[RMDB]
Conditions: 150 mM KOAc, 10 mM MgCl2 and 150 mM bicine (pH 8.5), 24 C. The record gives the reactivity of an RNA of 177 nucleotides to 2A3 and DMS. The data come from the RNA Mapping Database (RMDB), library RFM100. DMS adducts were read by reverse transcription with MarathonRT. For 2A3 the reverse transcriptase was SuperScript II with manganese. Values cover nucleotides 27 to 126.
RNA sequence: GGGAACGACUCGAGUAGAGUCGAAAACCGACGUUCACUCCACGCGCUAAUUCCCGGGGGCCCCACAGCCCCCACACUCCCUCUCGGCCCGAGGCUCUGAAGGGCACAACCAGGGCUCCACACUGAAAUUGCUGGGAGUAUUCGUACUCCCAGCAAUAAAAGAAACAACAACAACAAC
Reactivity to 2A3 in 0.01 (KOAc 150mM, MgCl2 10mM, bicine 150mM(pH8.5), 24C), signal-to-noise 1, nucleotides 027 to 126: c010c000g010a030c030g070u070u030c020a030c050u010c030c000a050c020g080c010g010c010u060a050a080u050u030c040c000c000g010g000g000g010g010c000c000c060c000a080c020a020g010c000c010c020c000c000a010c000a000c010u030c000c000c000u010c000u010c000g030g000c010c020c000g040a020g040g000c000u000c020u070g080a100a070g020g000g000c020a030c020a050a040c010c010a010g000g030g010c010u040c010c010a080c000a010c020u040g020a110a110
Reactivity to DMS in 0.01 (KOAc 150mM, MgCl2 10mM, bicine 150mM(pH8.5), 24C), signal-to-noise 2, nucleotides 027 to 126: c050c010g000a070c100g010u010u000c070a000c010u020c140c050a080c070g040c090g000c020u000a070a140u030u000c010c040c030g000g010g000g000g020c010c000c010c260a260c120a240g070c000c050c050c010c010a030c010a050c210u050c000c000c050u000c050u010c100g030g010c010c050c000g060a140g000g000c000u000c120u000g020a080a030g010g000g010c010a080c070a120a000c090c070a110g000g010g010c000u000c080c030a030c100a090c070u000g050a120a030